[RMDB]
RNA sequence: GGGAACGACUCGAGUAGAGUCGAAAAUUGCCGUGCACCUCGACCCAGGCAUCGCCAUUGUCGCCCUUGACGAUCUUGUAAGGAACAAGAUCCUUGUCCUUGGUGACCAUCGGAUCGUCAUAGCGAAGCCUAGUCAGUGAUUCGUCACUGACUAGGCAAAAGAAACAACAACAACAAC
Reactivity to DMS in 0.01 (KOAc 150mM, MgCl2 10mM, bicine 150mM(pH8.5), 24C), signal-to-noise 4, nucleotides 027 to 126: u010u010g010c040c020g050u000g010c040a080c050c010u000c090g010a110c050c020c010a180g010g010c070a040u000c150g000c020c100a070u000u020g000u000c020g000c010c050c110u000u000g010a030c010g000a010u000c000u000u000g040u010a080a070g010g020a090a080c020a070a060g000a150u010c100c060u010u000g020u000c030c010u000u000g020g020u000g010a060c040c080a080u000c080g000g000a020u010c020g010u000c000a030u000a070g000c060g010a050a120
Reactivity to 2A3 in 0.01 (KOAc 150mM, MgCl2 10mM, bicine 150mM(pH8.5), 24C), signal-to-noise 4, nucleotides 027 to 126: u050u040g050c020c000g010u030g030c020a060c050c020u040c080g080a070c010c010c010a010g010g030c010a040u050c030g020c030c030a070u060u170g040u050c010g020c020c120c000u000u020g000a000c010g010a010u030c010u030u200g080u130a050a070g030g040a060a080c030a060a020g060a140u060c000c080u040u060g030u010c020c010u050u090g130g050u140g100a110c020c010a080u110c030g030g000a010u010c000g020u010c020a020u030a010g020c040g030a050a010
About this RNA
Structure probing data (DMS and 2A3) for a 177-nucleotide construct. 2A3 adducts were read by reverse transcription with SuperScript II with manganese. Reactivities are given for positions 27 through 126.